[RMDB]
RNA sequence: GGGAACGACUCGAGUAGAGUCGAAAAGCAUAAAAAUUGACUCUCCAGGGGUUGCCGAGAGUCUUUCUAAGGGCAAUGUGCUAGGCAGAGUCUUAGCCUCUUCUGUGUAUGUGCUACAGAGAAGAUGGCCUGACUAUUAGUUCGCUAAUAGUCAGGCAAAAGAAACAACAACAACAAC
Reactivity to 2A3 in 0.01 (KOAc 150mM, MgCl2 10mM, bicine 150mM(pH8.5), 24C), signal-to-noise 6, nucleotides 027 to 126: g050c020a090u270a120a140a070a060a080u130u130g000a000c000u010c000u020c030c030a040g070g010g050g130u060u080g030c010c030g060a050g020a020g070u120c020u040u110u010c000u010a020a050g120g020g000c020a030a030u110g050u170g230c010u060a090g010g000c100a040g030a000g140u010c010u010u080a010g020c000c000u000c000u010u000c000u000g200u000g030u040a060u160g180u120g160c010u000a010c010a000g120a000g000a040a010g010a020u120g050
Reactivity to DMS in 0.01 (KOAc 150mM, MgCl2 10mM, bicine 150mM(pH8.5), 24C), signal-to-noise 3, nucleotides 027 to 126: g000c070a110u030a040a070a040a100a160u020u000g000a030c000u000c000u000c000c100a180g000g000g020g000u000u010g010c010c070g010a030g030a030g000u020c100u000u010u000c030u000a100a080g030g020g000c030a040a030u030g000u010g030c000u010a050g000g010c150a030g000a080g020u010c000u000u000a080g000c030c010u000c000u000u000c010u010g000u000g010u000a000u040g010u020g020c180u000a030c010a030g000a040g030a020a010g000a020u040g010